RNA sequence: GGGAACGACUCGAGUAGAGUCGAAAAUUCUGCCAUAAGUACCUCCAUAUUCCGCUGAGUAGGAUUCGACAAUGGGUUUGAGUCGGUGAUUGUAAAACUUCCUUUUAUCGAUCUUGAUUCGCGUAUAUCGGGUUAGUAGCUUCGGCUACUAACCCGAAAAAGAAACAACAACAACAAC
Reactivity to 2A3 in 0.01 (KOAc 150mM, MgCl2 10mM, bicine 150mM(pH8.5), 24C), signal-to-noise 1, nucleotides 027 to 126: u010u000c040u040g050c050c050a080u040a050a010g010u070a130c000c000u070c050c000a040u040a120u170u090c000c000g020c130u130g050a110g060u140a070g000g000a060u150u000c000g000a000c200a230a110u140g000g000g060u060u000u210g050a050g000u060c000g000g040u220g000a070u000u100g150u300a090a070a070a070c000u110u020c000c000u000u300u000u200a000u130c050g110a060u000c000u070u020g060a020u270u050c060g000c000g250u150a140u010a060